[RMDB]
RNA sequence: GGGAACGACUCGAGUAGAGUCGAAAAAGAGGAGGCAUCCAAAGGGAUCGCAUUGAUCCCAAAUCCAAGCUUCAAUGUUCUUCUCUCUUUCUCACUCAAAAUGUUAAUUUUAUUUGGGAUCAUGCUACUCAUUUUGCCGCUUCGGCGGCAAAAUGAGAAAAGAAACAACAACAACAAC
Reactivity to 2A3 in 0.01 (KOAc 150mM, MgCl2 10mM, bicine 150mM(pH8.5), 24C), signal-to-noise 1, nucleotides 027 to 126: a000g000a000g000g000a000g010g040c000a000u100c040c040a200a070a000g040g000g000a270u160c160g030c180a000u000u300g020a000u000c000c000c000a000a000a000u000c120c120a000a000g170c000u150u170c030a000a000u130g000u180u300c000u000u000c000u000c000u000c000u160u000u020c060u000c220a150c040u040c030a000a110a100a240u040g030u130u260a190a070u040u180u270u020a070u070u000u150g000g000g000a000u040c000a010u270g010c000u030a010
Structure probing data (2A3) for a 177-nucleotide construct.
High 2A3 reactivity points to a flexible backbone, as in loops and unpaired stretches.